[RMDB]
RNA sequence: GGGAACGACUCGAGUAGAGUCGAAAAAGCAACCAAUAGGGGUUAGAUAACUUUCCAGGUCACCUAUGCGGCAAGGAUCUGAAGGCAACACCAGAAAAUGCACACCUUACAGCAUGCAUCACCUACCCGGGAGGAUAGUAUUCGUACUAUCCUCCCGAAAAGAAACAACAACAACAAC
Reactivity to 2A3 in 0.01 (KOAc 150mM, MgCl2 10mM, bicine 150mM(pH8.5), 24C), signal-to-noise 2, nucleotides 027 to 126: a030g000c020a010a020c010c020a000a030u110a170g110g020g000g020u060u030a050g060a120u110a150a110c040u050u060u030c050c020a010g030g070u020c020a010c050c000u020a040u150g040c070g040g000c010a010a160g050g000a030u000c030u070g030a060a010g070g020c030a020a000c000a020c010c020a020g130a070a090a010a030u130g010c010a000c010a070c050c030u040u130a050c030a030g000c030a000u100g000c040a040u040c020a030c020c020u090a050c030c030
Reactivity to DMS in 0.01 (KOAc 150mM, MgCl2 10mM, bicine 150mM(pH8.5), 24C), signal-to-noise 2, nucleotides 027 to 126: a060g030c080a070a060c030c030a110a050u010a070g020g000g010g020u010u000a070g010a150u000a080a090c070u020u000u000c020c050a110g000g010u010c050a070c050c050u000a050u000g030c030g010g020c090a060a090g010g010a030u020c050u000g020a070a070g010g020c050a020a030c100a080c080c020a090g000a030a050a030a050u000g010c060a030c090a050c090c030u000u010a070c110a040g010c070a040u010g020c020a050u000c090a080c060c030u000a080c070c080
This 177-nucleotide RNA was probed chemically with 2A3 and DMS. The reactions ran in a buffer of 150 mM KOAc, 10 mM MgCl2 and 150 mM bicine (pH 8.5), at 24 C. DMS adducts were read by reverse transcription with MarathonRT. The DMS profile rests on 1,595 reads. Values cover nucleotides 27 to 126. The 2A3 profile rests on 1,561 reads.